[RMDB]
RNA sequence: GGGAACGACUCGAGUAGAGUCGAAAAGAUAUGGACCAGUGUGGUGGAACUACGAGGUGGGUCGGAAACGACCCACGCUCGCCACGUAACAUCACUGGUCCUAAGUCAAAAGGACCCUUCGGGGUCCCGAGGGUGAACUGUUCGCAGUUCACCCUCGAAAAGAAACAACAACAACAAC
Reactivity to DMS in 0.01 (KOAc 150mM, MgCl2 10mM, bicine 150mM(pH8.5), 24C), signal-to-noise 1, nucleotides 027 to 126: g020a060u040a300u000g030g000a010c000c010a030g010u000g030u010g040g010u020g000g000a140a050c140u010a290c020g000a000g000g110u000g000g000g070u000c000g000g000a080a100a140c040g020a050c000c000c000a000c030g040c010u000c000g020c000c020a010c060g020u000a080a140c120a010u010c010a010c000u000g000g000u010c000c000u000a000a030g020u000c060a090a090a170a130g000g000a030c000c020c000u000u000c250g030g020g000g020u020c000c020
Source: RMDB library TTRDES, as collected in RNAgym. Chemical mapping of a 177-nucleotide RNA with DMS. The DMS profile rests on 756 reads.